RNA sequence: GGGAACGACUCGAGUAGAGUCGAAAAGGGGUUGCCAGUAUACGGCAUCUUCGGUAGUUGAAAUAAUGCACGGUGAAGGAACACCGUACAGUUCCUCACUUAACGGCCAGCUUUUAUGCUAUUAAUGCACCGCGUAUUAGUUCGCUAAUACGCGGUGAAAAGAAACAACAACAACAAC
Reactivity to 2A3 in 0.01 (KOAc 150mM, MgCl2 10mM, bicine 150mM(pH8.5), 24C), signal-to-noise 5, nucleotides 027 to 126: g030g030g000g020u030u040g030c020c020a080g120u170a150u150a190c110g000g000c010a000u000c000u030u020c030g020g030u100a090g030u020u140g050a010a050a130u210a040a060u120g030c040a000c030g000g020u020g100a150a020g070g040a040a040c030a010c000c020g030u010a020c040a020g010u020u000c000c000u000c010a020c000u050u160a080a060c070g030g000c000c020a000g010c000u030u140u020u120a040u260g000c080u020a060u140u140a150a060u170g030
Reactivity to DMS in 0.01 (KOAc 150mM, MgCl2 10mM, bicine 150mM(pH8.5), 24C), signal-to-noise 3, nucleotides 027 to 126: g020g000g010g020u000u000g010c000c000a150g020u080a160u060a150c110g000g050c010a000u010c020u000u000c030g000g000u010a050g020u010u000g010a040a090a050u030a080a070u030g010c050a120c050g010g000u000g000a120a040g020g010a030a050c000a060c070c150g010u020a030c090a070g000u010u000c000c000u020c030a010c020u020u020a060a120c120g000g000c070c180a070g000c070u010u010u010u020a060u050g000c000u000a060u030u020a070a040u050g000